[RMDB]
Conditions: 150 mM KOAc, 10 mM MgCl2 and 150 mM bicine (pH 8.5), 24 C. Structure probing data (2A3 and DMS) for a 177-nucleotide construct. 2A3 adducts were read by reverse transcription with SuperScript II with manganese. Reactivities are given for positions 27 through 126.
RNA sequence: GGGAACGACUCGAGUAGAGUCGAAAAGCUUAUGGGCUAGAAGCCCCGGAGAUACCCCUGCUUCGUCAGGCAGUCUGUACCGCGUACAGCCUGAAACUCCCUAAACCUCAACAACCAGCCACUCCGGCCCACUUAUUGAAUUCGUUCAAUAAGUGGGAAAAGAAACAACAACAACAAC
Reactivity to 2A3 in 0.01 (KOAc 150mM, MgCl2 10mM, bicine 150mM(pH8.5), 24C), signal-to-noise 9, nucleotides 027 to 126: g010c010u120u130a100u250g020g000g000c030u050a080g060a250a030g100c020c010c000c000g060g020a050g010a050u180a140c030c030c000c010u010g010c010u060u130c030g120u120c020a010g010g030c010a010g020u010c010u020g020u020a040c020c140g100c030g040u010a020c010a010g000c000c000u020g010a070a030a020c030u040c000c000c000u070a100a100a060c010c010u050c040a040a080c010a040a060c060c020a010g010c020c010a040c020u010c020c000g040g000
Reactivity to DMS in 0.01 (KOAc 150mM, MgCl2 10mM, bicine 150mM(pH8.5), 24C), signal-to-noise 3, nucleotides 027 to 126: g030c020u000u030a100u010g000g010g010c010u000a160g020a170a290g000c020c040c010c090g000g000a050g000a110u010a120c090c070c010c040u010g020c020u010u030c100g000u020c030a050g010g000c020a020g010u010c040u010g010u000a030c040c200g010c230g030u010a040c010a050g000c040c000u000g010a060a080a090c100u000c010c010c020u010a040a060a100c060c020u000c040a080a110c090a080a110c020c040a050g000c020c040a040c040u010c030c040g010g020